[RMDB]
RNA sequence: GGGAACGACUCGAGUAGAGUCGAAAAGGGCCAGCAUCCGUUUCCAGACGGCCCUGAGUGGAUUGUGACGUAACAUGGCACCUUGCUGGCGCUCUCUUAUUAUUUCAUGCCAGUGCCCUCGUUAUGGCCACCUUGUUUAGUUCGCUAAACAAGGUGGAAAAGAAACAACAACAACAAC
Reactivity to 2A3 in 0.01 (KOAc 150mM, MgCl2 10mM, bicine 150mM(pH8.5), 24C), signal-to-noise 2, nucleotides 027 to 126: g030g020g000c020c030a010g050c060a060u050c020c010g030u000u030u030c070c000a050g050a090c030g050g020c030c000c020u010g040a050g060u120g000g000a070u080u160g120u070g030a060c020g010u020a050a010c020a080u020g000g000c010a080c060c060u090u150g000c010u030g000g010c020g050c000u030c000u000c020u100u050a220u170u060a170u080u300u110c100a030u170g020c020c000a020g000u020g070c000c010c020u030c040g020u020u020a060u080g040g000
Reactivity to DMS in 0.01 (KOAc 150mM, MgCl2 10mM, bicine 150mM(pH8.5), 24C), signal-to-noise 2, nucleotides 027 to 126: g010g000g000c010c000a080g010c080a100u000c040c040g010u000u000u000c050c070a110g020a110c130g010g000c000c010c000u010g020a070g020u010g010g010a130u000u010g010u010g020a150c020g000u000a020a050c070a110u000g000g000c010a090c100c150u010u020g000c050u010g000g020c030g040c130u030c110u010c070u000u030a070u010u010a110u000u010u010c130a040u010g020c000c040a040g020u000g000c010c000c060u000c140g010u010u000a040u010g000g000

The data come from the RNA Mapping Database (RMDB), library RFMREP. This 177-nucleotide RNA was probed chemically with 2A3 and DMS. 2A3 is a SHAPE reagent: it acylates the 2'-hydroxyl of flexible nucleotides of all four kinds. Values cover nucleotides 27 to 126.